This 177-nucleotide RNA was probed chemically with DMS and 2A3.
For DMS, 1,370 sequencing reads were counted.
Conditions: 150 mM KOAc, 10 mM MgCl2 and 150 mM bicine (pH 8.5), 24 C.
DMS adducts were read by reverse transcription with MarathonRT.
Reactivities are given for positions 27 through 126.
RNA sequence: GGGAACGACUCGAGUAGAGUCGAAAAGUUAACAUGAAUACCUAUGAACUUAGUCAGGUUUUUUUAUAAUAUAGCGAUGUAGGUUAGGUAACACUAAUCUCAUGACAUUUCUCCUUUCAACCGAAACACUCAGUGCUGUAUUCGUACAGCACUGAGUAAAAGAAACAACAACAACAAC
Reactivity to DMS in 0.01 (KOAc 150mM, MgCl2 10mM, bicine 150mM(pH8.5), 24C), signal-to-noise 1, nucleotides 027 to 126: g040u000u000a020a220c180a090u030g000a120a030u000a100c060c010u000a090u100g010a010a070c180u070u000a080g000u000c020a050g000g000u030u000u000u000u000u010u040a100u030a060a050u030a090u050a000g020c080g000a030u050g010u020a020g000g000u000u000a000g010g020u040a100a080c110a150c060u000a000a060u000c030u020c080a000u000g000a090c140a150u000u000u000c030u000c010c100u010u000u020c150a000a030c050c010g020a110a020a080c170
Reactivity to 2A3 in 0.01 (KOAc 150mM, MgCl2 10mM, bicine 150mM(pH8.5), 24C), signal-to-noise 3, nucleotides 027 to 126: g090u110u080a040a040c050a140u060g060a070a050u090a070c010c030u060a040u070g040a060a010c030u060u090a060g060u080c060a060g130g080u050u020u000u000u000u070u050a110u060a150a070u210a010u100a100g040c020g100a040u050g060u140a020g000g000u000u000a000g010g030u010a020a000c020a000c090u040a010a010u000c000u000c020a020u050g060a070c000a020u090u110u050c070u110c000c000u130u120u110c080a030a020c060c000g050a100a010a030c070